[RMDB]
RNA sequence: GGGAACGACUCGAGUAGAGUCGAAAAUGAUGGUGCGCGAGGCACCACUUCGCCAGGAUGCUGCCCCCGCGCGACACGAUGCCGGUGCGCCGCCGGGCGGUCAACGGCACGUGCGCCAGCCGCACCCCCUCUGUUCAGACUUCGGUCUGAACAGAGGAAAAGAAACAACAACAACAAC
Reactivity to DMS in 0.01 (KOAc 150mM, MgCl2 10mM, bicine 150mM(pH8.5), 24C), signal-to-noise 2, nucleotides 027 to 126: u010g030a130u020g020g020u010g000c040g050c130g010a100g000g010c020a020c050c040a010c030u000u000c030g030c040c040a110g010g010a110u020g010c050u000g000c030c000c010c020c110g070c090g010c030g020a170c000a020c030g000a140u000g030c040c030g010g020u000g020c150g010c010c000g000c080c230g010g040g000c000g050g000u000c020a020a100c020g000g000c000a030c070g000u000g000c000g000c020c120a080g010c060c030g010c030a150c020c000c020
Reactivity to 2A3 in 0.01 (KOAc 150mM, MgCl2 10mM, bicine 150mM(pH8.5), 24C), signal-to-noise 1, nucleotides 027 to 126: u250g080a050u030g010g000u000g000c030g000c080g050a100g030g050c010a020c000c010a020c000u100u110c050g150c040c020a050g070g000a110u130g030c060u030g000c010c040c010c000c030g000c000g000c020g070a030c010a000c010g130a130u150g060c060c000g040g000u040g040c110g000c010c010g000c020c050g090g070g000c050g020g010u050c000a020a040c000g000g000c000a010c010g010u020g000c000g000c000c010a000g060c060c000g020c000a000c030c000c000